The data come from the RNA Mapping Database (RMDB), library TTRDES. This 177-nucleotide RNA was probed chemically with DMS and 2A3. For DMS, 10,719 sequencing reads were counted. For 2A3, 23,596 sequencing reads were counted.
RNA sequence: GGGAACGACUCGAGUAGAGUCGAAAAAAAGAUAUGGAGCCUGAACUACGCUGAAACCACGCGUUGAAAGCAUGUCGGAAACGACAUGCUGGAGCGUGGGAGUACGGCGCAGGCUCCUAAGUCAAAAGUACAUAGUAGUGUUCGCACUACUAUGUACAAAAGAAACAACAACAACAAC
Reactivity to DMS in 0.01 (KOAc 150mM, MgCl2 10mM, bicine 150mM(pH8.5), 24C), signal-to-noise 6, nucleotides 027 to 126: a060a070a100g010a020u000a170u010g000g010a020g020c000c000u000g000a080a050c090u030a300c010g000c000u000g010a210a200a190c010c010a010c000g030c000g020u000u010g000a130a160a040g000c000a000u000g010u000c000g010g000a040a010a060c010g010a010c000a000u000g010c000u000g000g000a010g010c000g020u000g010g000g000a020g000u000a110c240g000g010c010g000c000a000g000g010c010u000c000c000u000a000a050g000u010c010a070a090a080a120
Reactivity to 2A3 in 0.01 (KOAc 150mM, MgCl2 10mM, bicine 150mM(pH8.5), 24C), signal-to-noise 3, nucleotides 027 to 126: a000a000a000g010a020u010a020u060g000g010a000g020c000c000u010g010a070a040c090u180a040c300g000c010u030g000a010a010a020c010c000a000c000g010c000g200u240u040g000a010a010a000g000c000a000u000g010u000c010g010g000a010a010a020c000g000a000c000a000u010g010c000u000g010g000a040g000c000g000u000g000g030g000a000g000u020a010c230g000g000c000g000c000a000g010g000c000u000c000c000u000a010a010g010u000c010a000a010a050a160